This 177-nucleotide RNA was probed chemically with DMS and 2A3. Values cover nucleotides 27 to 126. It was measured as part of the RMDB library M2PK50. DMS adducts were read by reverse transcription with MarathonRT. 2A3 adducts were read by reverse transcription with SuperScript II with manganese. The RNA was probed in 150 mM KOAc, 10 mM MgCl2 and 150 mM bicine (pH 8.5) at 24 C.
RNA sequence: GGGAACGACUCGAGUAGAGUCGAAAAAGUAUCGGGUUCGCCCGAUACUGUUGGCGGGCGGCCUUUGUCCUGUCGCGCGUAUAUUGCGCGCGAUAUACGCGCAUGUGGGGUCGUUCGCGACCCCAAAGCAUAAGAGCAGAUUCGUCUGCUCUUAUGCAAAAGAAACAACAACAACAAC
Reactivity to DMS in 0.01 (KOAc 150mM, MgCl2 10mM, bicine 150mM(pH8.5), 24C), signal-to-noise 4, nucleotides 027 to 126: a020g010u000a000u000c010g010g010g020u000u010c260g010c010c000c000g000a010u000a000c010u010g010u000u000g020g020c020g000g010g010c060g000g000c020c030u000u000u010g000u000c050c050u010g000u010c110g010c000g010c000g020u000a020u000a030u000u000g010c040g010c250g030c010g010a000u000a010u000a010c030g010c030g030c020a100u010g010u000g010g010g010g020u000c000g020u000u010c090g010c010g010a040c020c000c000c030a040a030a090
Reactivity to 2A3 in 0.01 (KOAc 150mM, MgCl2 10mM, bicine 150mM(pH8.5), 24C), signal-to-noise 3, nucleotides 027 to 126: a010g030u020a020u020c010g000g010g030u070u080c170g060c050c000c000g010a000u000a000c000u000g030u020u100g110g040c030g000g050g010c020g020g020c010c000u050u060u080g070u040c010c020u070g080u120c110g000c000g010c010g000u000a030u010a010u040u090g030c150g000c020g010c000g030a000u000a000u010a010c010g040c010g040c040a040u160g050u100g130g010g000g010u010c000g010u000u030c110g010c000g050a030c000c000c000c020a020a040a000